[RMDB]
RNA sequence: GGGAACGACUCGAGUAGAGUCGAAAAAGGCCCUGUGCUGGGCACAGCCUGAGCUACGUCAUCAGGCGAGGAUGGUGAUUUAGUUCAUAAUUAUUAUUUCAUCCUAAUUAGAAUGCUAAUCAUGAUCGCGGCGUGACUUGCCGAAGGCCACACAGCAGGAACUAGACCAUUUCGAUGGUCUAGUUCCAAAAGAAACAACAACAACAAC
Reactivity to 2A3 in 0.01 (KOAc 150mM, MgCl2 10mM, bicine 150mM(pH8.5), 24C), signal-to-noise 2, nucleotides 027 to 156: a000g160g050c020c000c020u050g050u040g050c050u030g000g000g040c030a050c050a080g000c000c000u020g000a000g030c060u170a150c120g090u120c060a170u020c030a030g070g000c000g000a020g040g000a020u040g070g010u010g000a020u050u040u120a040g020u010u060c030a030u040a100a010u010u040a020u080u080a050u030u180u240c070a090u090c040c010u030a030a010u020u000a010g060a190a020u100g040c030u020a020a000u020c010a010u060g100a000u100c000g000c020g040g000c020g010u080g100a120c060u040u150g010c040c000g030a070a010g030g000c060c000a010c010a000c000a040g010c020a000
Chemical mapping of a 207-nucleotide RNA with 2A3. It was measured as part of the RMDB library OK3TST. Conditions: 150 mM KOAc, 10 mM MgCl2 and 150 mM bicine (pH 8.5), 24 C.